An RNA of 207 nucleotides, treated with DMS and 2A3 and read out base by base. The RNA was probed in 150 mM KOAc, 10 mM MgCl2 and 150 mM bicine (pH 8.5) at 24 C. For DMS the reverse transcriptase was MarathonRT.

RNA sequence: GGGAACGACUCGAGUAGAGUCGAAAAGGGAAUGUUGGUUUACCCCGUUAUCAAAUGAUUACCGACCAAUAAUUGGCGAAACUCGUUUCGCGUUGGCUGCCUAAUUCAAGGAAUUAGCGUGCCUUCAAAGACAUCAAGAAGUUCGCUUCUUGAUGAAGAACUACCGUUAGUUCGCUAACGGUAGUUCAAAAGAAACAACAACAACAAC
Reactivity to DMS in 0.01 (KOAc 150mM, MgCl2 10mM, bicine 150mM(pH8.5), 24C), signal-to-noise 3, nucleotides 027 to 156: g020g000g020a100a070u010g030u000u000g000g000u000u010u000a300c020c000c010c020g010u010u010a080u000c060a080a090a080u010g030a160u000u000a060c020c010g010a030c010c030a080a100u000a070a170u000u000g000g000c000g010a070a050a060c020u000c120g010u000u000u000c010g000c030g010u000u000g010g020c000u000g010c140c010u000a010a020u000u000c000a160a200g010g020a040a030u000u000a010g040c020g010u010g020c000c020u000u010c030a060a100a160g000a190c020a010u000c010a010a010g000a020a010g030u000u030c300g040c010u000u000c000u000u010g010a020u000g010a030a040
Reactivity to 2A3 in 0.01 (KOAc 150mM, MgCl2 10mM, bicine 150mM(pH8.5), 24C), signal-to-noise 5, nucleotides 027 to 156: g070g010g030a110a110u150g030u040u030g060g040u060u080u230a130c020c010c000c000g060u050u080a110u120c040a080a150a160u220g010a060u080u100a040c020c030g030a020c020c020a020a030u160a150a070u130u110g130g000c030g020a020a030a050c080u080c160g090u020u020u010c010g000c020g000u010u010g000g010c040u060g030c040c010u010a010a010u020u020c160a220a080g120g030a080a020u020u000a010g000c040g050u020g000c020c000u020u010c020a070a070a010g060a030c000a000u000c000a000a000g000a000a000g010u050u100c180g030c130u000u000c000u000u010g000a000u010g000a030a030